About this RNA
This 177-nucleotide RNA was probed chemically with 2A3 and DMS. Conditions: 150 mM KOAc, 10 mM MgCl2 and 150 mM bicine (pH 8.5), 24 C.
[RMDB]
RNA sequence: GGGAACGACUCGAGUAGAGUCGAAAAACUAGGAGCGCACAUCUCUCUAAGACUGUACGACAGUCUGUCUCUCUAGCACGCUUGUUCAACGAGACAGAGAGAGCGUUGGAACAAGUGUGCAACGAAAGGUACAGGCAAUAUUCGUAUUGCCUGUACCAAAAGAAACAACAACAACAAC
Reactivity to 2A3 in 0.01 (KOAc 150mM, MgCl2 10mM, bicine 150mM(pH8.5), 24C), signal-to-noise 6, nucleotides 027 to 126: a000c080u090a040g030g020a030g010c050g050c060a020c030a230u060c040u000c000u000c010u040a060a020g000a010c010u030g110u140a060c060g060a030c090a000g000u000c010u020g020u000c080u000c000u000c040u050a020g010c000a000c000g000c000u000u000g000u000u010c010a010a010c000g010a020g070a140c060a110g250a010g010a020g010a020g150c000g000u010u020g150g020a010a010c000a000a010g000u000g000u000g000c000a000a000c050g060a050a050a020
Reactivity to DMS in 0.01 (KOAc 150mM, MgCl2 10mM, bicine 150mM(pH8.5), 24C), signal-to-noise 5, nucleotides 027 to 126: a080c200u000a060g010g010a070g020c070g010c080a070c120a110u010c010u000c020u000c050u010a100a090g000a020c010u000g000u000a090c120g020a300c300a010g010u000c010u010g000u000c060u000c000u010c040u000a300g010c020a000c020g010c000u000u020g010u000u000c010a030a010c020g010a090g000a090c090a140g010a070g010a110g020a060g000c040g020u000u000g000g010a020a020c000a020a000g000u010g010u000g010c000a030a030c250g000a050a070a090
Record summary: DMS adducts were read by reverse transcription with MarathonRT.